[RMDB]
Notes:
This 207-nucleotide RNA was probed chemically with DMS and 2A3. The reactions ran in a buffer of 150 mM KOAc, 10 mM MgCl2 and 150 mM bicine (pH 8.5), at 24 C. Source: RMDB library OK3TST, as collected in RNAgym. High DMS reactivity at an A or C suggests that its Watson-Crick edge is free.
RNA sequence: GGGAACGACUCGAGUAGAGUCGAAAAGUGGUACGUGAGUACCACGUCAGUCGUGAGACUGACUAGAUCGGAAGUUACGUCAAAGAUCGUGUCUACAGAUGGUGAUGUAGACACUAAGGAUUCUACAUGGAUUUGAAUGUAGACAUCAAGAUGUAAGGAUCACAUACGAAUUCGUUCGUAUGUGAUCAAAAGAAACAACAACAACAAC
Reactivity to DMS in 0.01 (KOAc 150mM, MgCl2 10mM, bicine 150mM(pH8.5), 24C), signal-to-noise 4, nucleotides 027 to 156: g100u000g010g030u000a000c000g000u010g000a300g040u000a010c010c000a020c030g020u010c010a020g020u000c010g010u020g000a300g010a060c010u020g010a040c040u000a030g010a120u000c030g000g000a070a070g030u000u000a030c040g050u000c030a100a120a270g000a130u010c130g010u000g000u000c000u000a010c010a030g010a120u010g000g010u000g000a160u000g010u000a010g010a010c000a010c010u010a050a090g020g010a110u000u000c010u000a010c010a010u010g000g000a270u000u000u000g010a160a080u000g010u010a010g010a030c110a050u000c040a070a200g000a090u000g000u000a090a090g000
Reactivity to 2A3 in 0.01 (KOAc 150mM, MgCl2 10mM, bicine 150mM(pH8.5), 24C), signal-to-noise 9, nucleotides 027 to 156: g010u010g010g000u000a010c020g060u100g110a060g010u000a000c000c000a000c010g000u000c000a010g000u010c000g050u050g120a090g000a020c010u000g000a010c010u030a020g060a100u070c080g040g040a080a070g080u050u060a030c030g020u020c050a110a060a000g060a050u100c050g010u000g000u000c000u000a000c000a020g070a180u180g070g110u130g030a050u020g020u000a000g000a010c010a000c010u020a030a020g100g000a030u000u020c010u000a010c000a010u050g180g050a270u170u140u300g140a070a010u020g000u000a000g010a030c030a020u020c040a050a030g030a030u060g040u090a030a030g100